[RMDB]
RNA sequence: GGGAACGACUCGAGUAGAGUCGAAAAGAUAUGGAGGCUUCAACAGCCUGUGGUCGGAAACGACCAUCAGGACAUGAAGCUCCUAAGUCAAAACCCCUGAACACAGGUUCGCCUGUGUUCAGGGGAACAUAUUUCAAUUCUUCGGAAUUGAAAUAUGAAAAGAAACAACAACAACAAC
Reactivity to 2A3 in 0.01 (KOAc 150mM, MgCl2 10mM, bicine 150mM(pH8.5), 24C), signal-to-noise 3, nucleotides 027 to 126: g000a030u050a020u140g030g000a030g230g280c010u010u020c010a100a110c050a140g110c000c020u000g010u000g000g020u000c010g030g010a060a060a080c000g000a000c000c000a020u140c020a000g030g000a010c020a130u050g000a010a010g000c000u010c000c010u020a050a010g050u020c030a020a040a130a300c010c010c000c010u000g000a000a010c000a000c000a010g040g070u100u120c300g110c070c000u000g000u020g000u010u010c000a000g000g000g000g000a000a000
Reactivity to DMS in 0.01 (KOAc 150mM, MgCl2 10mM, bicine 150mM(pH8.5), 24C), signal-to-noise 4, nucleotides 027 to 126: g000a030u000a300u010g000g010a040g010g000c010u000u000c000a020a080c190a170g000c000c000u000g020u000g010g010u000c000g010g000a100a100a160c000g000a000c010c000a000u000c010a010g010g000a050c080a160u010g010a020a010g010c000u000c000c000u000a020a150g010u010c030a090a080a140a140c000c000c000c000u000g000a030a010c000a000c000a000g010g010u000u010c250g020c000c000u000g010u000g010u010u000c000a020g000g010g000g000a010a010